[RMDB]
RNA sequence: GGGAACGACUCGAGUAGAGUCGAAAAGCAGCGGGAGCAGCGCGUCUUCGAGGACCUCAUCCACUCCAAGGGCCACAUGGUCCUGCCAGAGCUCGGCCAGGACCUGGCACUGUUGAGGGCGGAGCCGGGUAACGGUAUAGUUCGCUAUACCGUUACCAAAAGAAACAACAACAACAAC
Reactivity to DMS in 0.01 (KOAc 150mM, MgCl2 10mM, bicine 150mM(pH8.5), 24C), signal-to-noise 9, nucleotides 027 to 126: g020c060a060g020c050g000g010g010a110g010c050a060g010c060g020c070g010u000c040u000u000c080g010a110g010g000a100c040c030u000c070a120u000c040c060a110c050u000c050c060a120a060g000g000g010c010c010a090c290a120u000g010g010u000c000c000u000g000c020c020a120g000a150g010c200u010c120g010g000c170c050a020g000g010a020c010c000u000g000g000c020a070c040u000g010u010u010g010a090g000g000g000c040g010g010a080g000c070c090g000
Reactivity to 2A3 in 0.01 (KOAc 150mM, MgCl2 10mM, bicine 150mM(pH8.5), 24C), signal-to-noise 7, nucleotides 027 to 126: g040c050a000g010c030g050g030g020a070g030c050a010g030c060g010c030g050u020c010u070u060c030g060a080g040g050a090c010c020u050c030a070u040c030c030a050c050u050c030c010a070a050g000g020g000c010c010a090c040a200u190g000g000u010c000c000u010g000c000c000a100g020a100g210c100u120c160g040g010c100c020a010g000g000a010c000c000u010g000g010c020a020c100u040g090u100u080g030a110g020g010g000c030g030g020a020g020c030c050g070